This 177-nucleotide RNA was probed chemically with DMS and 2A3. For 2A3, 1,413 sequencing reads were counted. For DMS the reverse transcriptase was MarathonRT. Reactivities are given for positions 27 through 126.
RNA sequence: GGGAACGACUCGAGUAGAGUCGAAAACUCAUCGGCCUGGUACCAUGCGAGGGCUGUACCGUCGUACAACAAGGCGUGGGACGCGGGGAAUCCCACGGCAUGCUUCCCGUCGAGCCUGAACACAGAGGCACAACAGGUACUUCGGUACCUGUUGUGCAAAAGAAACAACAACAACAAC
Reactivity to DMS in 0.01 (KOAc 150mM, MgCl2 10mM, bicine 150mM(pH8.5), 24C), signal-to-noise 1, nucleotides 027 to 126: c000u000c030a130u030c040g000g010c070c060u000g000g000u000a070c060c090a080u000g000c010g000a130g000g020g010c040u000g010u000a070c030c020g000u010c070g030u010a070c060a050a070c030a120a140g000g000c020g020u000g000g010g000a030c010g000c080g000g000g000g000a300a110u000c000c000c000a050c040g020g030c010a050u000g000c070u000u000c010c010c040g010u010c060g000a050g000c030c020u000g000a040a050c110a090c130a150g010a130g030
Reactivity to 2A3 in 0.01 (KOAc 150mM, MgCl2 10mM, bicine 150mM(pH8.5), 24C), signal-to-noise 1, nucleotides 027 to 126: c010u020c010a020u100c030g030g000c000c070u100g000g040u090a100c030c060a090u100g040c080g040a080g110g040g060c070u050g010u040a070c070c030g120u100c070g030u000a060c020a090a010c000a130a040g090g020c020g030u030g030g020g000a010c050g030c150g040g030g000g050a000a050u040c030c010c000a000c040g040g030c020a010u070g030c020u000u030c000c000c000g000u030c000g020a020g010c000c040u070g060a140a050c070a010c060a090g100a010g140